[RMDB]
An RNA of 207 nucleotides, treated with DMS and 2A3 and read out base by base.
RNA sequence: GGGAACGACUCGAGUAGAGUCGAAAACAUGAGACUUUGGUUUCCUCAUUUAUCCAUUCAAUAAAUAUUUAUUGAGUGCCUAUUAUACACCAACACUCUUCUAGGCCCUGGGGAUACAGCAGACAAAAUUCUCUGACCUCAUGGAAUUUAAAUUCCACAUUUUAUAAUGAUUCGUCAUUAUAAAAUGAAAAGAAACAACAACAACAAC
Reactivity to DMS in 0.01 (KOAc 150mM, MgCl2 10mM, bicine 150mM(pH8.5), 24C), signal-to-noise 1, nucleotides 027 to 156: c060a200u010g000a110g000a050c040u010u000u000g040g000u000u010u010c050c010u030c030a210u000u010u010a040u010c030c000a030u010u000c000a000a040u000a010a080a300u020a140u000u000u000a030u050u010g010a030g000u000g030c040c020u000a020u000u010a190u000a110c060a090c060c010a090a170c110a150c060u000c000u090u000c020u000a050g000g000c000c000c040u000g010g020g000g020a210u000a040c140a110g060c030a050g020a130c070a040a020a050a110u000u000c110u010c020u000g000a030c030c110u010c120a070u000g000g010a020a010u000u000u030a030a120a220u010u010c010c010a150
Reactivity to 2A3 in 0.01 (KOAc 150mM, MgCl2 10mM, bicine 150mM(pH8.5), 24C), signal-to-noise 3, nucleotides 027 to 156: c060a060u140g040a030g010a070c000u050u010u030g000g020u020u100u080c020c020u140c090a150u160u140u130a070u040c030c000a000u000u010c000a010a010u070a090a070a050u280a170u240u180u040a030u030u000g000a010g000u010g010c020c010u100a150u220u100a120u120a090c070a040c050c030a080a040c010a020c040u010c000u020u000c010u000a010g000g010c000c000c000u000g020g000g000g000a000u030a130c070a010g030c030a000g010a060c070a020a170a080a130u200u040c050u010c040u070g140a090c010c010u060c040a020u050g010g000a010a000u110u170u130a160a210a090u020u000c020c000a010
It was measured as part of the RMDB library OK3TST.
The reactions ran in a buffer of 150 mM KOAc, 10 mM MgCl2 and 150 mM bicine (pH 8.5), at 24 C.